[RMDB]
RNA sequence: GGGAACGACUCGAGUAGAGUCGAAAACGAGAAAUUCGGAAUGCAGCCCUCCAGAGGCGUGUUGUUCUACGGGCCCCCUGGGUGCGGGAAGACACUCCUGGCAAAGGCCGUCGCCUCCGAGUGCAGCGUUUACGUAUUAGUUCGCUAAUACGUAAACAAAAGAAACAACAACAACAAC
Reactivity to 2A3 in 0.01 (KOAc 150mM, MgCl2 10mM, bicine 150mM(pH8.5), 24C), signal-to-noise 7, nucleotides 027 to 126: c050g020a040g090a160a220a030u060u020c010g000g030a020a040u110g010c030a010g010c030c010c000u010c020c010a050g050a080g130g040c120g030u020g010u010u030g100u030u010c060u190a300c020g020g050g000c000c000c010c040c050u130g020g000g010u090g170c010g000g010g020a020a010g020a000c000a000c010u020c010c000u000g010g000c070a110a060a060g010g000c040c030g090u080c080g020c010c010u000c000c010g000a010g010u040g030c040a040g070c030
Reactivity to DMS in 0.01 (KOAc 150mM, MgCl2 10mM, bicine 150mM(pH8.5), 24C), signal-to-noise 9, nucleotides 027 to 126: c050g000a160g010a100a110a060u000u000c010g010g010a050a070u000g020c040a170g010c170c010c040u000c050c030a300g000a080g000g010c130g010u000g010u000u000g010u000u000c020u000a080c020g010g000g000c010c000c020c190c150u010g020g030g040u000g010c030g010g000g010a040a130g000a040c020a010c010u000c010c010u000g000g000c230a060a100a100g000g000c030c050g010u000c120g000c050c190u000c020c040g000a030g020u000g010c120a110g010c160

This 177-nucleotide RNA was probed chemically with 2A3 and DMS. The data come from the RNA Mapping Database (RMDB), library OK2TRN. For DMS the reverse transcriptase was MarathonRT. Conditions: 150 mM KOAc, 10 mM MgCl2 and 150 mM bicine (pH 8.5), 24 C. For 2A3, 18,909 sequencing reads were counted. The DMS profile rests on 18,550 reads.